[RMDB]
RNA sequence: GGGAACGACUCGAGUAGAGUCGAAAAUAGAACACAGUGGUUUGUGGAACAACCGCGUCUGGAAGGUUGCCAACCUCGACCACAUCUAUGCCGUGGCUGCGGAGGGUAUCAGCAACUUGGGCAGCGACGAAAGUGACACUUUCGAGUGUCACUUUCGAAAAGAAACAACAACAACAAC
Reactivity to DMS in 0.01 (KOAc 150mM, MgCl2 10mM, bicine 150mM(pH8.5), 24C), signal-to-noise 2, nucleotides 027 to 126: u000a000g010a030a140c130a100c220a130g000u000g010g020u000u010u000g060u010g000g060a130a110c040a010a030c020c000g020c070g020u010c130u010g010g000a140a140g010g000u000u000g010c000c060a110a110c000c000u000c060g000a100c000c000a020c010a110u000c060u010a050u010g020c070c030g020u000g000g020c020u010g010c060g010g020a080g000g000g000u010a060u000c200a090g000c090a030a070c060u000u010g010g000g020c000a030g000c070g000a180
Reactivity to 2A3 in 0.01 (KOAc 150mM, MgCl2 10mM, bicine 150mM(pH8.5), 24C), signal-to-noise 2, nucleotides 027 to 126: u060a010g020a080a010c110a020c070a080g030u040g070g020u060u120u270g040u030g030g050a030a020c030a030a000c020c000g030c040g080u100c050u080g190g140a120a080g030g030u010u000g020c050c040a110a100c000c010u010c010g000a010c040c000a000c000a010u030c020u020a030u110g030c040c030g010u040g070g000c040u220g040c090g040g040a020g050g000g040u110a050u200c030a020g070c000a060a020c020u020u020g060g000g000c040a030g020c040g030a050
This 177-nucleotide RNA was probed chemically with DMS and 2A3. For 2A3 the reverse transcriptase was SuperScript II with manganese.